[RMDB]
RNA sequence: GGGAACGACUCGAGUAGAGUCGAAAAAAAAGAUAUGGAGGUAACUACCCACCUCCAAUGCUCAACAGCGAUCUUCGGAAACGAAGAUCGACAUGAGCGCAAGGAGAGGUUACCUCCUAAGUCAAAAGACAUAAUGUGUGUUCGCACACAUUAUGUCAAAAGAAACAACAACAACAAC
Reactivity to 2A3 in 0.01 (KOAc 150mM, MgCl2 10mM, bicine 150mM(pH8.5), 24C), signal-to-noise 1, nucleotides 027 to 126: a000a000a000a000g180a070u270a120u210g010g010a020g070g000u050a000a000c010u160a120c050c080c040a050c070c000u040c010c010a000a030u030g000c010u000c010a090a150c070a190g050c010g020a010u040c000u000u000c000g040g030a090a060a070c000g010a000a030g000a010u020c020g000a010c020a070u080g000a000g000c010g030c030a200a300g000g010a000g060a010g000g000u000u000a020c000c030u000c000c000u010a000a000g040u070c070a040a060a040a080
Reactivity to DMS in 0.01 (KOAc 150mM, MgCl2 10mM, bicine 150mM(pH8.5), 24C), signal-to-noise 3, nucleotides 027 to 126: a050a030a100a150g000a100u010a140u030g000g010a010g000g000u000a020a020c020u000a100c030c000c000a300c060c000u000c030c000a060a120u050g000c000u000c000a020a110c300a140g020c000g000a010u000c000u020u000c000g000g000a100a110a210c000g000a040a000g010a000u000c000g030a030c070a110u010g000a010g040c020g050c300a130a210g000g000a030g000a060g090g010u000u010a010c040c000u000c000c000u010a010a120g000u010c130a040a060a070a120

Source: RMDB library TTRDES, as collected in RNAgym. An RNA of 177 nucleotides, treated with 2A3 and DMS and read out base by base. 2A3 is a SHAPE reagent: it acylates the 2'-hydroxyl of flexible nucleotides of all four kinds. Values cover nucleotides 27 to 126.